[RMDB]
RNA sequence: GGGAACGACUCGAGUAGAGUCGAAAAGCGAAGAGAAUGGCCAUUUUAGGUGACACAGCCUGGGAUUUUGGAUCCUUGGGAGGAGUGUUUACAUCUAUAGGAAAGGCUCUCCACCAAGUCUUUGGAGAGGUAUACCAACGUUCGCGUUGGUAUACCUAAAAGAAACAACAACAACAAC
Reactivity to DMS in 0.01 (KOAc 150mM, MgCl2 10mM, bicine 150mM(pH8.5), 24C), signal-to-noise 2, nucleotides 027 to 126: g020c080g020a090a080g010a070g000a100a060u000g010g020c020c030a160u020u000u000u000a060g020g000u000g010a070c030a010c020a260g010c010c020u000g000g020g000a040u000u010u020u000g000g000a040u000c040c010u000u000g020g000g010a070g000g000a170g010u000g000u000u020u000a200c070a060u000c020u000a060u010a090g000g000a080a090a060g000g000c030u000c010u010c020c000a220c040c050a060a140g000u020c050u010u000u000g020g010a120g000
Reactivity to 2A3 in 0.01 (KOAc 150mM, MgCl2 10mM, bicine 150mM(pH8.5), 24C), signal-to-noise 1, nucleotides 027 to 126: g000c020g030a050a010g030a050g000a090a110u160g060g090c000c000a060u100u060u020u040a040g000g010u040g010a000c010a000c000a030g000c020c000u000g020g070g020a050u020u080u160u300g220g000a000u060c020c000u010u090g030g020g010a120g140g060a260g040u040g000u070u020u040a060c010a020u050c020u040a130u130a080g080g000a100a100a050g020g010c020u020c010u000c010c000a010c020c010a080a020g070u050c000u070u080u050g020g000a030g000
An RNA of 177 nucleotides, treated with DMS and 2A3 and read out base by base. It was measured as part of the RMDB library OK2TRN. The RNA was probed in 150 mM KOAc, 10 mM MgCl2 and 150 mM bicine (pH 8.5) at 24 C. The 2A3 profile rests on 921 reads. As a SHAPE reagent, 2A3 marks flexible, mostly unpaired nucleotides at the ribose 2'-OH.